[RMDB]
RNA sequence: GGGAACGACUCGAGUAGAGUCGAAAAGUACUCAGAAAUGAGUAGAAAUAAAAGGCGAACACACACGACGCCGAAUGAUCGAAAGAUCAGAACCUCACUAUAGUGUGUGGAAUUGUGAGGAAAGAAAGGGUACAAACAUGUUCGCAUGUUUGUACCCAAAAGAAACAACAACAACAAC
Reactivity to DMS in 0.01 (KOAc 150mM, MgCl2 10mM, bicine 150mM(pH8.5), 24C), signal-to-noise 2, nucleotides 027 to 126: g010u000a000c000u000c000a010g000a140a110a150u000g000a000g010u010a000g000a150a000a110u040a120a040a010a180g000g000c010g000a140a060c000a020c040a020c040a020c140g020a220c030g000c020c020g030a090a090u030g010a000u000c000g010a040a060a130g040a020u000c000a090g000a120a050c020c000u000c000a000c020u000a050u000a090g010u040g000u000g010u000g000g000a070a090u000u000g000u030g010a040g000g040a100a140a040g000a200a040a060
Reactivity to 2A3 in 0.01 (KOAc 150mM, MgCl2 10mM, bicine 150mM(pH8.5), 24C), signal-to-noise 3, nucleotides 027 to 126: g030u000a000c000u030c010a000g020a010a100a040u010g000a010g010u020a060g110a000a090a000u300a020a130a020a000g000g000c010g060a130a000c020a000c000a000c000a000c030g210a030c000g070c030c000g080a080a100u060g000a000u000c000g090a030a050a070g000a000u000c000a000g000a080a090c000c000u010c010a000c010u080a030u040a190g000u000g000u010g020u010g040g070a070a080u030u050g000u010g000a010g000g140a010a040a000g190a060a120a070

An RNA of 177 nucleotides, treated with DMS and 2A3 and read out base by base.
High DMS reactivity at an A or C suggests that its Watson-Crick edge is free.
For 2A3, 1,607 sequencing reads were counted.